[RMDB]
RNA sequence: GGGAACGACUCGAGUAGAGUCGAAAAGAUAUGGAUGGGUAUGGAGCGAGGAUCUCGGAAACGAGGGAGCUCGUACACCAUCCUAAGUCAAAAGCCUAAUAGCUGCGUUCGCGCAGCUAUUAGGCAAGAGAGUAUUGUACUUCGGUACAAUACUCUCAAAAGAAACAACAACAACAAC
Reactivity to DMS in 0.01 (KOAc 150mM, MgCl2 10mM, bicine 150mM(pH8.5), 24C), signal-to-noise 2, nucleotides 027 to 126: g010a060u000a300u000g000g010a010u000g010g000g000u010a020u010g010g020a010g000c010g000a060g000g000a050u010c000u000c000g000g010a110a130a240c010g010a010g010g000g000a030g010c000u000c000g000u010a000c000a110c000c000a000u000c000c000u010a000a090g010u010c060a070a110a150a130g000c000c000u030a000a000u010a010g010c000u010g020c000g000u000u010c200g030c010g020c000a000g020c000u000a000u000u000a000g010g000c010a000a030
Reactivity to 2A3 in 0.01 (KOAc 150mM, MgCl2 10mM, bicine 150mM(pH8.5), 24C), signal-to-noise 1, nucleotides 027 to 126: g030a020u040a030u170g010g010a000u000g030g030g020u010a010u140g300g030a020g000c010g040a260g050g010a020u000c000u000c020g020g050a090a090a070c010g000a000g020g000g000a000g010c020u000c000g000u000a010c060a100c000c000a010u000c000c000u000a020a000g020u010c010a000a030a000a180g000c020c000u010a020a000u000a000g000c000u000g000c020g080u050u090c300g020c000g000c230a000g000c020u010a000u000u000a000g010g020c000a000a000